[RMDB]
This 177-nucleotide RNA was probed chemically with 2A3 and DMS. The 2A3 profile rests on 25,848 reads. It was measured as part of the RMDB library TTRDES.
RNA sequence: GGGAACGACUCGAGUAGAGUCGAAAAGAUAUGGAGGAGGACAUCACUGAUGACCAUGGGUCGGAAACGACCCAUGCAAGGUGAUGUCUCCUCCUAAGUCAAAUCCACUCUGUUCGCAGAGUGGAAACAGAAUUAUAUGGUUCGCCAUAUAAUUCUGAAAAGAAACAACAACAACAAC
Reactivity to 2A3 in 0.01 (KOAc 150mM, MgCl2 10mM, bicine 150mM(pH8.5), 24C), signal-to-noise 5, nucleotides 027 to 126: g020a020u080a060u200g010g000a010g010g010a050g130g170a020c000a000u050c000a000c000u150g100a300u130g030a200c030c010a000u010g010g000g020u010c010g020g020a060a070a040c010g000a000c000c030c000a000u000g000c000a040a120g000g000u000g000a000u000g000u010c000u000c000c000u010c000c000u000a010a000g000u010c020a000a000a120u020c000c000a000c000u000c000u010g120u120u110c300g020c120a000g000a000g000u020g000g000a030a000a000
Reactivity to DMS in 0.01 (KOAc 150mM, MgCl2 10mM, bicine 150mM(pH8.5), 24C), signal-to-noise 8, nucleotides 027 to 126: g010a060u010a300u000g000g010a010g010g000a040g020g010a030c000a010u000c000a000c000u000g000a090u010g000a150c300c010a000u000g000g000g020u000c010g010g000a100a090a200c000g010a010c000c000c000a000u000g000c030a040a080g000g010u000g010a010u000g000u000c000u000c010c000u000c000c000u010a000a060g000u000c040a100a150a140u000c000c000a000c000u000c000u000g000u000u010c210g010c010a010g010a020g020u000g000g000a000a030a130
DMS adducts were read by reverse transcription with MarathonRT.